The record gives the reactivity of an RNA of 207 nucleotides to 2A3.
Source: RMDB library OK3TST, as collected in RNAgym.
The reactions ran in a buffer of 150 mM KOAc, 10 mM MgCl2 and 150 mM bicine (pH 8.5), at 24 C.
For 2A3 the reverse transcriptase was SuperScript II with manganese.
Values cover nucleotides 27 to 156.
[RMDB]
RNA sequence: GGGAACGACUCGAGUAGAGUCGAAAAUGCUCUUCCGUGACCGCAUAGGCACCUACAAGGUCAAUGUCUUCAUGGCCUUCCAGGACUGACCGUGCCCGCACAGGCUUUAGCGCCCUGUAAAUGGGGAACACUGUACAACUGCCGGUGUCUACACCGCGCUGCGUCAUAGGUUCGCCUAUGACGCAGCAAAAGAAACAACAACAACAAC
Reactivity to 2A3 in 0.01 (KOAc 150mM, MgCl2 10mM, bicine 150mM(pH8.5), 24C), signal-to-noise 2, nucleotides 027 to 156: u110g000c000u050c000u020u060c080c050g060u000g050a090c040c040g000c070a050u090a180g050g000c000a030c000c000u110a070c070a070a000g020g000u050c020a000a170u120g000u000c010u130u120c180a050u030g000g000c020c030u080u060c060c010a030g020g020a030c030u040g020a060c040c010g080u020g000c040c000c000g000c030a020c030a030g000g000c000u060u040u120a140g040c080g000c000c000c000u010g110u190a070a160a170u280g040g000g020g000a090a030c000a000c050u020g030u240a090c030a090a110c060u020g000c000c000g000g000u000g000u020c000u080a060c050a010c010c010g000c000